[RMDB]
RNA sequence: GGGAACGACUCGAGUAGAGUCGAAAAACAUCUAUCAGCCCCCUGAGGGCAAUGCCUCAGUCAUACAGGACUUCACUGAGGAUGGGCACCUCCUUCACACCUUCUACCUGGGCACUGGCCGCAGGGUGAUAUACAAGUAUGGCAAACUGUCAAAGCACCUACCGAUAAAUUUCGAUUUAUCGGUAGGAAAAGAAACAACAACAACAAC
Reactivity to 2A3 in 0.01 (KOAc 150mM, MgCl2 10mM, bicine 150mM(pH8.5), 24C), signal-to-noise 2, nucleotides 027 to 156: a000c060a190u100c070u170a250u120c050a080g080c030c060c000c000c060u090g050a100g000g000g070c010a020a020u070g020c010c030u080c000a000g050u040c050a070u110a250c090a090g120g080a130c050u080u060c050a050c060u070g000a010g070g000a040u060g000g050g000c080a190c080c000u000c020c040u010u090c030a060c000a000c000c060u080u060c000u040a140c000c000u000g000g000g000c040a040c160u090g210g000c060c000g040c020a000g000g060g030u000g000a030u090a000u000a040c050a060a060g070u060a180u050g000g000c000a010a060a200c040u010g010u080c060a000a000a150g120c010a020

Chemical mapping of a 207-nucleotide RNA with 2A3. 2A3 adducts were read by reverse transcription with SuperScript II with manganese. The RNA was probed in 150 mM KOAc, 10 mM MgCl2 and 150 mM bicine (pH 8.5) at 24 C. For 2A3, 687 sequencing reads were counted.